The record gives the reactivity of an RNA of 177 nucleotides to DMS and 2A3. Reactivities are given for positions 27 through 126. The reactions ran in a buffer of 150 mM KOAc, 10 mM MgCl2 and 150 mM bicine (pH 8.5), at 24 C. For DMS, 1,470 sequencing reads were counted.
RNA sequence: GGGAACGACUCGAGUAGAGUCGAAAAUCACAAAACGGUUUAGCAUCAGGACACAAAGUGCUCGUCACUUUGUAACAGUUUCCAGUCGUCGUUUGGCAGAAACCGUUUUGAUGAUGUGACCGAGCGACUAUGUCGGUUUGUUCGCAAACCGACAUAGAAAAGAAACAACAACAACAAC
Reactivity to DMS in 0.01 (KOAc 150mM, MgCl2 10mM, bicine 150mM(pH8.5), 24C), signal-to-noise 2, nucleotides 027 to 126: u000c000a070c020a000a040a030a000c010g000g000u000u000u000a140g000c040a110u000c100a150g010g000a080c060a060c000a010a010a010g020u000g000c040u020c270g010u010c000a020c000u000u000u010g000u020a070a100c230a080g010u000u000u020c080c060a090g010u010c120g010u010c060g000u010u010u000g010g020c030a110g000a020a050a030c000c000g030u000u010u010u000g010a100u000g030a010u000g020u000g000a300c010c010g020a140g010c120g020a120
Reactivity to 2A3 in 0.01 (KOAc 150mM, MgCl2 10mM, bicine 150mM(pH8.5), 24C), signal-to-noise 1, nucleotides 027 to 126: u000c000a000c000a010a000a000a000c030g020g010u020u020u020a010g010c000a050u040c040a030g000g060a030c040a010c000a030a020a010g010u010g050c030u060c120g190u270c000a000c000u000u000u000g010u000a040a030c020a030g020u000u140u060c040c030a050g060u010c040g040u000c000g080u150u170u170g040g000c020a010g170a030a020a000c000c000g000u000u000u000u010g000a000u000g000a030u040g020u050g010a030c020c020g000a050g130c060g030a020